[RMDB]
RNA sequence: GGGAACGACUCGAGUAGAGUCGAAAAAUGUAAGGACUAUACGAACAAUGGCUCAACGAUCUCCCUGUGGUGAUAUAUUUUCACGACUCGCAGAGUACGAACGGGAGUUUAUUAUGCAUAUGGUGGACAUCUGAAUGAGUUUCGACUCAUUCAGAUGAAAAGAAACAACAACAACAAC
Reactivity to 2A3 in 0.01 (KOAc 150mM, MgCl2 10mM, bicine 150mM(pH8.5), 24C), signal-to-noise 4, nucleotides 027 to 126: a000u150g020u100a070a050g070g000a000c040u030a010u030a120c060g050a080a000c030a080a030u050g040g000c000u020c040a070a140c060g030a060u010c010u000c020c000c010u020g020u040g100g010u000g030a010u020a010u020a070u100u150u040u030c040a030c030g060a030c030u030c080g040c030a010g030a020g080u090a110c080g000a070a010c020g030g010g000a020g000u020u010u020a050u010u020a040u070g040c030a040u030a020u130g070g010u050g040g040a020
Reactivity to DMS in 0.01 (KOAc 150mM, MgCl2 10mM, bicine 150mM(pH8.5), 24C), signal-to-noise 8, nucleotides 027 to 126: a080u010g010u010a090a140g010g010a050c030u010a050u000a050c050g010a090a070c090a050a050u010g010g010c010u010c040a060a100c060g000a110u000c030u000c030c000c010u000g020u010g020g020u000g000a030u000a080u000a090u000u000u000u000c020a040c010g000a070c090u010c060g000c120a090g010a060g010u000a090c150g010a050a100c060g000g000g000a040g010u000u000u010a020u000u000a060u000g010c060a050u000a030u000g010g010u000g010g010a170
Source: RMDB library OK2TST, as collected in RNAgym.
An RNA of 177 nucleotides, treated with 2A3 and DMS and read out base by base.
Reactivities are given for positions 27 through 126.